This 207-nucleotide RNA was probed chemically with 2A3. For 2A3, 644 sequencing reads were counted. The RNA was probed in 150 mM KOAc, 10 mM MgCl2 and 150 mM bicine (pH 8.5) at 24 C.
[RMDB]
RNA sequence: GGGAACGACUCGAGUAGAGUCGAAAAGCCUUCUUCGGAAGGCGGCAAACCUUUGUGCACAGACAUGCUCGACGCCCGAGGCCCCAUUGGGGAACUACCUCGGCGCGACCCCGAGCAACAGCUGUGCACUCUGGUCAAUAACGGGCUUCGGCCCGAAAAGUUCGCUGUAAUUCGUUACAGCGAACUUAAAAGAAACAACAACAACAAC
Reactivity to 2A3 in 0.01 (KOAc 150mM, MgCl2 10mM, bicine 150mM(pH8.5), 24C), signal-to-noise 1, nucleotides 027 to 156: g000c000c000u000u000c000u020u050c120g150g000a000a000g000g010c050g000g000c060a090a090a020c000c000u000u000u020g030u040g040c020a010c010a010g150a110c050a100u050g000c000u000c000g080a050c030g030c020c000c000g000a000g000g000c020c020c020c040a300u300u300g020g010g010g010a040a030c020u140a050c120c000u000c000g000g000c020g000c000g050a070c000c040c030c030g030a020g010c010a010a010c030a030g030c000u000g000u000g000c000a000c000u000c010u010g010g000u070c000a000a110u220a270a010c000g000g000g000c000u060u070c210g170g000c020c010c000g060a030a000